[RMDB]
RNA sequence: GGGAACGACUCGAGUAGAGUCGAAAAUUACUCCAUGCCUUUUUCCAGGUUCCAUCCCAUGACCCUGAGUAAGUGCGGGAAAUAGGAUCAUAAUUUGACGGAACAUUAAUGAUUUUCCAUUUUUUCUUAAUGCUGAUAUUCGGCAACGCAUUAGGGAUCUAUUUACAUGUUUCGACAUGUAAAUAGAAAAAGAAACAACAACAACAAC
Reactivity to 2A3 in 0.01 (KOAc 150mM, MgCl2 10mM, bicine 150mM(pH8.5), 24C), signal-to-noise 8, nucleotides 027 to 156: u070u030a070c030u010c040c010a080u100g030c010c000u070u110u060u080u050c040c010a030g000g000u050u030c030c020a080u030c020c000c010a030u080g050a080c010c000c020u020g040a040g080u080a130a020g010u030g080c040g010g020g040a010a060a020u120a060g030g030a030u040c010a030u050a180a100u100u070u150g110a080c080g040g040a090a030c030a050u060u160a130a080u080g050a040u020u040u080u120c020c050a100u110u030u010u010u050u040c010u020u050a040a030u030g000c010u020g040a100u050a140u230u200c030g050g010c040a040a020c030g000c000a010u020u040a010g010g000g000a000
Reactivity to DMS in 0.01 (KOAc 150mM, MgCl2 10mM, bicine 150mM(pH8.5), 24C), signal-to-noise 2, nucleotides 027 to 156: u000u010a040c040u000c030c020a110u000g020c010c010u000u000u000u000u000c030c040a130g020g040u010u010c000c000a120u000c020c100c020a130u000g000a120c020c000c020u020g010a150g010u000a110a110g040u000g030c080g000g030g010a020a060a120u000a060g010g000a070u000c040a070u010a050a110u000u010u000g010a120c030g020g000a060a060c050a120u000u000a050a100u010g010a160u000u000u000u000c040c060a100u010u010u000u000u000u000c010u000u000a000a020u000g000c000u000g010a150u010a150u000u010c070g030g010c030a060a090c090g010c000a040u000u010a020g010g010g020a120

Source information: The record gives the reactivity of an RNA of 207 nucleotides to 2A3 and DMS.